Notes:
The record gives the reactivity of an RNA of 177 nucleotides to DMS and 2A3. The DMS profile rests on 3,450 reads. Conditions: 150 mM KOAc, 10 mM MgCl2 and 150 mM bicine (pH 8.5), 24 C. For DMS the reverse transcriptase was MarathonRT.

RNA sequence: GGGAACGACUCGAGUAGAGUCGAAAAGAUAUGGAAUUGGAGGACGCGAUAAGCUGCAGUCGGAAACGACUGGCAGCUUUUGACGCGUUGAAGAUUCCUAAGUCAAAGUAGUUCUUCGGAACUACAACCACAUUCUUAACUUCGGUUAAGAAUGUGGAAAAGAAACAACAACAACAAC
Reactivity to DMS in 0.01 (KOAc 150mM, MgCl2 10mM, bicine 150mM(pH8.5), 24C), signal-to-noise 4, nucleotides 027 to 126: g000a040u010a300u000g000g000a010a000u000u000g000g030a300g000g010a000c010g010c020g000a150u000a020a010g010c000u000g030c000a040g000u010c000g010g000a100a090a140c000g000a030c000u000g020g010c020a000g020c010u000u000u010u000g010a190c090g010c000g010u010u020g020a300a210g000a020u000u000c000c010u010a050a170g010u010c030a110a130a160g000u000a000g000u000u000c000u010u020c300g010g010a010a020c000u000a000c000a100a190
Reactivity to 2A3 in 0.01 (KOAc 150mM, MgCl2 10mM, bicine 150mM(pH8.5), 24C), signal-to-noise 3, nucleotides 027 to 126: g020a000u090a050u150g000g010a020a010u040u040g090g070a180g300g100a030c000g020c040g030a070u030a220a000g010c010u000g000c010a000g000u010c010g040g050a080a080a070c000g010a000c010u040g070g090c000a000g000c000u000u010u010u010g010a000c000g000c000g000u000u050g000a000a000g020a000u000u000c010c000u030a130a020g050u070c040a100a110a110g010u000a010g010u000u030c010u060u050c290g070g010a010a010c000u000a000c010a010a040